[RMDB]
RNA sequence: GGGAACGACUCGAGUAGAGUCGAAAAGAACUGACAAUGCAAAGGUUUAUGAUGAUUACAAAGCAUUGUUAAAAGAUGACACGAUUGAUGUUAUCCAUGUUUGUACGCCAAAUGACUCGCAUUGUGAUAUCCGGGGCGUAUUCGUACGCCCCGGAUAAAAAGAAACAACAACAACAAC
Reactivity to 2A3 in 0.01 (KOAc 150mM, MgCl2 10mM, bicine 150mM(pH8.5), 24C), signal-to-noise 1, nucleotides 027 to 126: g040a060a040c120u090g000a000c000a000a000u000g030c020a070a130a000g300g130u180u020u250a000u000g080a200u010g020a000u010u010a000c090a080a060a000g010c000a000u000u090g100u200u070a030a000a000a000g000a000u060g000a030c030a000c060g050a000u000u300g140a200u010g080u040u000a000u050c020c000a000u000g050u020u020u020g000u000a020c000g080c070c000a000a110a160u090g050a000c020u060c090g000c000a010u000u060g000u000g240a100